[RMDB]
Structure probing data (DMS) for a 177-nucleotide construct. Conditions: 150 mM KOAc, 10 mM MgCl2 and 150 mM bicine (pH 8.5), 24 C. In probing experiments dimethyl sulfate is read out at A N1 and C N3, which are open when not base-paired. Source: RMDB library TTRINS, as collected in RNAgym.
RNA sequence: GGGAACGACUCGAGUAGAGUCGAAAAGAUAUGGAACACGUGUUCACUCGAGGAGCUUUUGACGCUUCAAGGGUCGGAAACGACCCGAAGAGCGAUAAGCUCCCGAGUGAACACGUGUUCCUAAGUCGACUUAACUACUGUUCGCAGUAGUUAAGUCAAAAGAAACAACAACAACAAC
Reactivity to DMS in 0.01 (KOAc 150mM, MgCl2 10mM, bicine 150mM(pH8.5), 24C), signal-to-noise 1, nucleotides 027 to 126: g020a110u000a300u000g000g000a040a000c000a000c000g030u000g020u000u010c000a040c010u030c010g000a200g050g000a020g010c000u000u000u000u000g020a250c160g010c000u000u000c010a030a300g000g010g000u000c000g010g000a080a070a240c030g010a000c000c000c000g010a140a200g010a000g010c000g000a070u000a000a010g010c000u000c010c010c000g010a000g030u000g010a010a000c010a000c010g010u000g000u000u000c000c000u010a020a090g000u000c150